[RMDB]
RNA sequence: GGGAACGACUCGAGUAGAGUCGAAAACUCACAGUGUCACUGACACUCAGUGACACACACUCUGUGACACUCUGAGUGUCUGUGUCACUCACACUCUCUCUGACUGACUCAGACUGUGUGACUGACACACGUUUCCCUCUUUCGAGAGGGAAACGUGAAAAGAAACAACAACAACAAC
Reactivity to 2A3 in 0.01 (KOAc 150mM, MgCl2 10mM, bicine 150mM(pH8.5), 24C), signal-to-noise 2, nucleotides 027 to 126: c020u030c010a070c000a040g020u030g020u010c010a000c030u020g120a220c030a020c160u060c010a000g020u010g120a010c000a000c000a000c000a010c030u130c040u070g050u030g080a040c030a010c070u060c050u080g050a040g030u030g020u000c030u050g010u000g000u000c000a000c010u030c010a010c010a000c000u040c000u000c000u000c020u040g020a050c070u150g050a090c010u040c010a010g000a020c020u030g000u000g000u000g030a040c030u050g040a000c010a010
Reactivity to DMS in 0.01 (KOAc 150mM, MgCl2 10mM, bicine 150mM(pH8.5), 24C), signal-to-noise 2, nucleotides 027 to 126: c020u000c010a160c220a060g020u000g040u000c030a040c030u020g020a140c210a020c190u010c040a000g010u020g020a090c130a020c060a080c190a100c120u000c060u000g010u000g000a110c080a050c080u000c140u020g000a010g000u000g000u020c060u000g020u000g000u000c000a010c090u000c010a000c020a020c040u020c050u030c160u000c040u010g010a270c190u000g010a140c250u000c000a020g010a060c040u000g000u000g010u000g000a060c090u000g030a040c050a060
Source information:
The record gives the reactivity of an RNA of 177 nucleotides to 2A3 and DMS. The 2A3 profile rests on 2,642 reads.